The record gives the reactivity of an RNA of 177 nucleotides to DMS and 2A3.
For 2A3 the reverse transcriptase was SuperScript II with manganese.
The data come from the RNA Mapping Database (RMDB), library OK2TST.
The DMS profile rests on 52,184 reads.
The reactions ran in a buffer of 150 mM KOAc, 10 mM MgCl2 and 150 mM bicine (pH 8.5), at 24 C.
As a SHAPE reagent, 2A3 marks flexible, mostly unpaired nucleotides at the ribose 2'-OH.
RNA sequence: GGGAACGACUCGAGUAGAGUCGAAAAUUGAAGCAACGCUCCACGCCUGCCGUCAGCGUUUACGCCCGAUUCUGAUGACCUCGCUGGCAUUUAUCUUCGGCGUAUUGCCAAUGGCAACCAGCACGGAGAUACGUAGUAUGUUCGCAUACUACGUAUCAAAAGAAACAACAACAACAAC
Reactivity to DMS in 0.01 (KOAc 150mM, MgCl2 10mM, bicine 150mM(pH8.5), 24C), signal-to-noise 9, nucleotides 027 to 126: u010u010g010a110a090g010c070a070a090c110g000c030u000c030c030a120c100g010c040c060u000g020c040c030g020u000c110a080g010c040g010u000u000u000a040c080g010c040c020c050g000a080u000u000c110u000g010a070u010g000a120c040c020u000c220g010c100u000g000g000c060a060u000u000u000a050u010c070u000u000c110g010g010c020g010u000a090u010u000g010c010c020a070a080u010g010g010c050a050a080c080c060a090g000c040a110c100g010g000a150
Reactivity to 2A3 in 0.01 (KOAc 150mM, MgCl2 10mM, bicine 150mM(pH8.5), 24C), signal-to-noise 9, nucleotides 027 to 126: u050u060g060a070a010g040c040a050a060c060g020c040u020c020c010a030c050g020c010c020u040g020c020c010g040u040c020a010g020c030g060u040u040u040a030c020g030c030c040c020g020a030u100u010c050u120g060a090u070g140a250c000c010u050c070g060c070u070g000g000c020a030u050u080u080a100u030c060u060u050c030g010g000c010g030u040a080u020u130g000c000c020a090a080u100g000g000c000a010a030c030c020a010g020c030a020c080g030g020a080